[RMDB]
About this RNA
An RNA of 207 nucleotides, treated with 2A3 and read out base by base. Values cover nucleotides 27 to 156.

RNA sequence: GGGAACGACUCGAGUAGAGUCGAAAACGAGAUGAAGAUGAUCUUGGUGGUGUUUUGCGCCAGGAAACCCAGGAUGGUAUUGAAGGCCUCCUUCUUGAUGAAGUGCGCCUCGUCGACCAGCAGGAGGUGGAAAUUCUGUCCGCGAAUGCUCUGAGGGCCUUCCUCACUACUUCGGUAGUGAGGAAGGAAAAGAAACAACAACAACAAC
Reactivity to 2A3 in 0.01 (KOAc 150mM, MgCl2 10mM, bicine 150mM(pH8.5), 24C), signal-to-noise 1, nucleotides 027 to 156: c070g010a030g000a000u140g030a090a130g090a160u130g000a010u060c000u000u000g000g030u010g140g000u090g140u040u210u220u190g060c030g000c000c030a030g000g000a020a020a110c030c010c020a010g050g020a030u020g060g000u100a000u050u210g110a170a000g140g000c040c000u110c000c020u030u000c020u080u160g070a050u170g000a050a000g040u070g100c060g040c070c020u040c070g050u010c010g010a070c030c020a020g090c110a000g000g000a000g000g000u090g020g160a000a000a060u090u080c050u030g000u010c000c000g080c080g110a060a010u090g010c000u010c010u060g040a110g000g030g050